[RMDB]
Structure probing data (2A3 and DMS) for a 177-nucleotide construct.
RNA sequence: GGGAACGACUCGAGUAGAGUCGAAAAACAUACAAUGGCGGGUUAAAAUCUCUAUGUUUUACUCUGACUGUAUCGCCAAUUGAUAUAAUCUCGUGCGGAUACGUAACUUCCAAAUCAGUAGAAGUAACAAUUGUUGGAGAUUCGUCUCCAACAAUUGAAAAGAAACAACAACAACAAC
Reactivity to 2A3 in 0.01 (KOAc 150mM, MgCl2 10mM, bicine 150mM(pH8.5), 24C), signal-to-noise 3, nucleotides 027 to 126: a000c020a000u140a040c000a030a200u060g050g000c040g000g040g060u150u130a080a130a060a110u050c040u000c020u100a050u140g070u020u000u000u050a050c030u050c010u050g120a070c030u070g000u070a040u070c000g030c000c030a030a060u060u060g060a020u030a020u030a210a210u020c030u000c050g080u180g020c060g090g030a020u000a070c000g010u020a000a090c020u030u000c010c020a070a110a160u110c020a040g050u080a020g030a060a020g020u010a050a070
Reactivity to DMS in 0.01 (KOAc 150mM, MgCl2 10mM, bicine 150mM(pH8.5), 24C), signal-to-noise 4, nucleotides 027 to 126: a110c090a070u020a060c100a050a070u000g010g020c060g010g010g000u010u010a030a110a080a060u000c060u000c080u000a050u010g010u000u000u000u000a050c050u010c020u000g010a080c070u010g000u000a040u000c020g020c020c020a070a070u010u000g010a090u000a050u020a110a080u000c030u010c150g010u010g020c060g000g010a040u000a020c040g000u000a040a060c060u000u000c020c020a040a070a100u020c090a040g010u000a040g010a050a070g000u020a110a160
For DMS the reverse transcriptase was MarathonRT. The data come from the RNA Mapping Database (RMDB), library OK2TRN.